Annotation
Structure probing data (2A3 and DMS) for a 177-nucleotide construct. The 2A3 profile rests on 678 reads. Reactivities are given for positions 27 through 126. The DMS profile rests on 1,111 reads. It was measured as part of the RMDB library OK1LIB. The reactions ran in a buffer of 150 mM KOAc, 10 mM MgCl2 and 150 mM bicine (pH 8.5), at 24 C. For DMS the reverse transcriptase was MarathonRT.

RNA sequence: GGGAACGACUCGAGUAGAGUCGAAAAACUAUUUGUUCUAUAGCAAAUAAACCCGAAACACAGGAUAUAUUUGUUAUAUAUGCUUUGUGGAACACAGCUGUUAGGACAUGAGCCAUCAGGGUCCAAAACGAUUUAAUCCGUUCGCGGAUUAAAUCGUAAAAGAAACAACAACAACAAC
Reactivity to 2A3 in 0.01 (KOAc 150mM, MgCl2 10mM, bicine 150mM(pH8.5), 24C), signal-to-noise 2, nucleotides 027 to 126: a000c030u000a090u090u060u020g090u130u050c010u120a090u070a030g020c010a010a010a010u030a070a080a080c000c000c000g010a010a060a000c000a000c050a010g010g010a000u000a000u000a050u020u010u070g120u180u000a010u040a010u010a010u090g160c010u060u100u090g040u030g010g000a070a000c000a020c010a030g060c040u080g050u150u120a050g050g010a000c010a020u120g010a030g110c010c000a020u020c030a000g090g080g010u000c000c000a010a010a010
Reactivity to DMS in 0.01 (KOAc 150mM, MgCl2 10mM, bicine 150mM(pH8.5), 24C), signal-to-noise 1, nucleotides 027 to 126: a120c170u000a000u000u000u000g000u020u010c160u000a100u080a070g040c010a000a000a060u010a050a120a100c090c000c000g000a170a080a070c030a070c050a040g020g010a020u010a080u000a000u000u050u000g000u000u030a020u010a030u000a020u020g000c020u050u000u000g060u020g030g000a160a070c160a020c290a080g000c300u000g020u000u000a010g010g000a080c000a080u000g000a070g000c090c140a040u000c020a000g000g030g000u030c010c020a040a070a060